[RMDB]
RNA sequence: GGGAACGACUCGAGUAGAGUCGAAAAGGGGUCUCGCAAGGGAGAUCUUUGGGUCGCAUCGAUCGGUACUGAAGCCUCCACGGUACCGGGAGCGACCGAUCUCCUGAUGACCGAGACGGAGGCACCCAAAAGGCAUCUCAGUUCGCUGAGAUGCCAACAUAACCUUUUCGUUCGCGAAAAGGUUAUGAAAAGAAACAACAACAACAAC
Reactivity to 2A3 in 0.01 (KOAc 150mM, MgCl2 10mM, bicine 150mM(pH8.5), 24C), signal-to-noise 3, nucleotides 027 to 156: g010g020g080g020u020c000u010c010g010c050a060a130g020g010g000a010g020a000u050c000u200u240u210g130g000g000u010c020g000c020a160u300c170g000a000u000c000g000g000u000a000c000u020g050a090a020g020c000c000u000c000c010a000c010g010g010u010a000c000c000g000g000g000a020g000c000g000a000c000c000g000a000u000c000u010c000c010u020g020a080u030g000a020c000c000g010a000g000a000c000g000g000a000g010g000c000a010c010c000c010a000a120a020a080g000g000c000a000u000c000u000c000a040g070u080u190c290g000c110u000g000a000g000a000u000g000c000c000a000a000
Reactivity to DMS in 0.01 (KOAc 150mM, MgCl2 10mM, bicine 150mM(pH8.5), 24C), signal-to-noise 2, nucleotides 027 to 156: g010g000g060g000u000c060u000c010g040c080a050a090g000g020g020a020g020a000u000c000u010u000u000g030g030g020u010c030g000c000a300u000c200g010a060u000c000g020g000u000a030c000u010g000a040a130g000c020c000u030c010c010a300c110g030g010u000a000c010c010g000g000g010a050g040c020g030a010c020c030g010a010u020c000u000c010c000u000g020a110u020g010a070c210c000g000a060g010a060c030g000g040a040g080g080c000a110c020c020c010a040a080a130a100g020g010c000a010u000c010u000c000a030g020u000u000c300g060c020u000g010a020g020a000u000g000c000c010a010a050

Structure probing data (2A3 and DMS) for a 207-nucleotide construct. For DMS, 3,467 sequencing reads were counted. It was measured as part of the RMDB library RNAMAK. The 2A3 profile rests on 6,098 reads. The RNA was probed in 150 mM KOAc, 10 mM MgCl2 and 150 mM bicine (pH 8.5) at 24 C. For 2A3 the reverse transcriptase was SuperScript II with manganese. High DMS reactivity at an A or C suggests that its Watson-Crick edge is free.